[RMDB]
Structure probing data (2A3 and DMS) for a 177-nucleotide construct. It was measured as part of the RMDB library OK1LIB. The reactions ran in a buffer of 150 mM KOAc, 10 mM MgCl2 and 150 mM bicine (pH 8.5), at 24 C.
RNA sequence: GGGAACGACUCGAGUAGAGUCGAAAACAUGGACGCUGGAGACACGGGGGUGCGACAUUCUCCCCUGAGGCGAAAGUCUCUCACACCCGGGGUGCCGAAGGUCAGAUAAGUUGGCGUUGCGGAACCCUCUUGGGAUGCUCUUCGGGGCGUCUCAAGAAAAAGAAACAACAACAACAAC
Reactivity to 2A3 in 0.01 (KOAc 150mM, MgCl2 10mM, bicine 150mM(pH8.5), 24C), signal-to-noise 4, nucleotides 027 to 126: c040a060u090g070g030a020c020g010c060u040g030g020a030g010a030c030a030c060g020g000g010g010g010u040g030c030g070a040c040a130u230u090c010u070c010c000c000c000u010g020a030g010g000c020g020a030a020a000g020u000c000u000c000u020c020a050c000a040c050c000c010g020g000g010g000u060g110c010c030g020a030a010g050g010u000c000a000g030a160u190a230a110g090u030u050g030g040c190g070u050u070g020c020g000g030a040a040c000c040c000
Reactivity to DMS in 0.01 (KOAc 150mM, MgCl2 10mM, bicine 150mM(pH8.5), 24C), signal-to-noise 6, nucleotides 027 to 126: c120a100u030g010g000a050c090g010c030u000g010g000a150g000a060c050a100c040g000g000g000g010g020u000g010c250g000a080c220a100u020u020c050u000c000c000c020c070u000g000a050g000g000c030g000a110a090a090g000u000c020u000c030u020c060a050c050a070c030c030c000g000g010g010g010u010g020c010c010g010a180a050g000g000u010c020a070g010a150u020a070a120g000u000u000g000g010c090g000u000u000g000c010g000g000a090a040c010c010c010